[RMDB]
RNA sequence: GGGAACGACUCGAGUAGAGUCGAAAAACAGUCUUAGGAUAGUGAAAUCUGAUUUGUCCAAGCGGAGCAAACUACUCGACCCUCAGUCCUUGUAUUUGUCCCUGUAGUAAGACCUAAUUAUUAUUAUUUCUUAAAGAUGGGAUUGGUGUCCUUGGCAGUACGCCUAAUAGUUCGCUAUUAGGCGUACAAAAGAAACAACAACAACAAC
Reactivity to 2A3 in 0.01 (KOAc 150mM, MgCl2 10mM, bicine 150mM(pH8.5), 24C), signal-to-noise 2, nucleotides 027 to 156: a000c010a010g050u040c040u040u080a080g040g010a060u000a140g100u090g100a050a120a190u050c060u020g030a070u070u120u160g050u030c080c010a050a050g060c050g110g000a020g110c020a020a040a050c020u100a030c010u050c050g070a050c000c040c000u040c000a010g050u050c030c000u080u150g030u140a190u070u040u030g040u060c000c000c000u010g030u000a130g030u010a080a000g010a030c010c010u010a090a190u060u190a020u000u050a050u130u080a200u190u300u050c030u090u170a230a260a090g040a120u150g000g000g000a030u000u050g000g020u050g060u090c000c040u030u050g020g020c090a010